The data come from the RNA Mapping Database (RMDB), library TTRDEL. Structure probing data (2A3 and DMS) for a 177-nucleotide construct. Reactivities are given for positions 27 through 126. For 2A3 the reverse transcriptase was SuperScript II with manganese. DMS adducts were read by reverse transcription with MarathonRT. The DMS profile rests on 3,979 reads.
[RMDB]
RNA sequence: GGGAACGACUCGAGUAGAGUCGAAAAGAUAUGGACCGAACCCUUCGAUAAGCUGUUUCGGAAACGAACAGCUUUUGACGAAGUUGCGGUCCUAAGUCAAAGGCUGUCGGGUUCGCCCGACAGCCAACUGGUAGAAAGAGUUCGCUCUUUCUACCAGAAAAGAAACAACAACAACAAC
Reactivity to 2A3 in 0.01 (KOAc 150mM, MgCl2 10mM, bicine 150mM(pH8.5), 24C), signal-to-noise 2, nucleotides 027 to 126: g000a000u040a010u120g010g000a000c000c000g030a040a070c110c050c010u090u020c060g300a300u060a170a000g020c000u020g060u180u230u270c020g010g000a030a020a020c000g000a000a010c000a000g000c030u010u010u000u040g050a020c000g000a000a000g030u070u150g130c000g000g010u000c000c000u000a030a000g040u030c030a180a070a060g010g040c010u010g000u000c040g000g000g110u080u200c290g080c030c000c010g000a000c030a000g000c020c000a000a010
Reactivity to DMS in 0.01 (KOAc 150mM, MgCl2 10mM, bicine 150mM(pH8.5), 24C), signal-to-noise 3, nucleotides 027 to 126: g010a010u000a160u010g000g010a010c010c000g000a050a080c180c300c080u000u000c010g020a170u010a030a020g010c000u000g000u000u000u000c000g020g000a060a030a070c000g000a010a020c000a010g000c000u000u000u000u000g020a170c090g010a040a030g000u010u000g010c000g020g000u000c000c000u000a010a070g000u010c010a140a160a110g010g010c010u010g000u010c010g000g010g010u000u010c270g000c000c000c000g010a020c000a000g010c000c010a000a000